[RMDB]
RNA sequence: GGGAACGACUCGAGUAGAGUCGAAAACUCUGGCAGGAGCUGUCACGGCAUCCUACGCCUCGGCAGAGCAGAGCGUCGGCGGCAUCGAGACCCUCUUCAAGGGUUCUGCCGACCGGAUGAAGACCUAUAAAGAAGAAACUUUCGAGUUUCUUCUUUAAAAAGAAACAACAACAACAAC
Reactivity to DMS in 0.01 (KOAc 150mM, MgCl2 10mM, bicine 150mM(pH8.5), 24C), signal-to-noise 3, nucleotides 027 to 126: c010u010c020u010g010g000c070a070g020g010a130g000c020u000g020u000c040a120c190g000g020c010a150u020c130c150u000a110c190g000c020c000u000c150g010g000c010a020g010a080g000c020a020g010a030g010c030g020u000c020g000g010c020g000g030c020a010u000c180g010a090g000a020c010c010c000u000c190u010u010c240a090a090g000g010g000u010u000c020u000g000c000c000g000a100c020c000g010g010a050u000g010a090a050g010a140c030c010u000a200
Reactivity to 2A3 in 0.01 (KOAc 150mM, MgCl2 10mM, bicine 150mM(pH8.5), 24C), signal-to-noise 1, nucleotides 027 to 126: c010u040c020u000g050g000c070a070g060g050a040g030c010u010g030u050c010a010c070g010g030c000a100u220c000c040u030a050c150g000c000c000u010c050g020g000c020a020g010a010g020c010a010g000a000g040c020g030u020c020g000g010c020g020g010c000a010u060c100g030a020g020a100c000c040c000u050c050u200u070c060a080a050g000g020g000u020u000c000u010g010c000c000g170a300c000c000g030g000a010u040g040a040a000g000a050c000c000u080a230
Structure probing data (DMS and 2A3) for a 177-nucleotide construct. The data come from the RNA Mapping Database (RMDB), library OK2TST. The DMS profile rests on 3,010 reads. The reactions ran in a buffer of 150 mM KOAc, 10 mM MgCl2 and 150 mM bicine (pH 8.5), at 24 C. 2A3 adducts were read by reverse transcription with SuperScript II with manganese.